[RMDB]
RNA sequence: GGGAACGACUCGAGUAGAGUCGAAAAGUCGGCCUUGACGAUGCCCCAGUGGUCGAGGAUCAGGGCAUUGGUGAUGACGGUGUCGGCCACUUCUUCGGCCAACCUUUGGCCCUGACCCAUGCCGUCGAAUCGGGUUGUGAUUCGUCACAACCCGAUUAAAAGAAACAACAACAACAAC
Reactivity to DMS in 0.01 (KOAc 150mM, MgCl2 10mM, bicine 150mM(pH8.5), 24C), signal-to-noise 3, nucleotides 027 to 126: g010u000c090g000g000c000c030u010u010g000a040c010g000a090u030g000c060c020c000c100a200g020u000g000g020u000c020g030a070g000g000a060u000c020a050g000g000g020c000a010u000u010g000g010u000g020a080u030g000a030c060g010g000u020g010u020c120g010g000c000c010a090c160u020u050c150u030u030c200g010g020c000c000a190a030c070c020u010u010u000g010g010c020c010c010u010g000a040c000c010c010a120u040g020c030c020g020u000c040g010
Reactivity to 2A3 in 0.01 (KOAc 150mM, MgCl2 10mM, bicine 150mM(pH8.5), 24C), signal-to-noise 5, nucleotides 027 to 126: g040u040c030g010g000c010c030u080u110g010a030c020g040a050u070g050c020c000c010c000a040g050u060g060g010u030c040g020a060g040g010a130u020c010a010g010g000g000c010a000u000u030g050g000u120g060a150u150g040a060c060g070g020u140g080u130c080g000g030c000c020a030c010u190u120c060u090u160c080g020g020c000c000a010a000c020c000u020u030u100g080g020c000c010c000u000g000a000c010c000c000a040u110g040c030c000g000u000c020g050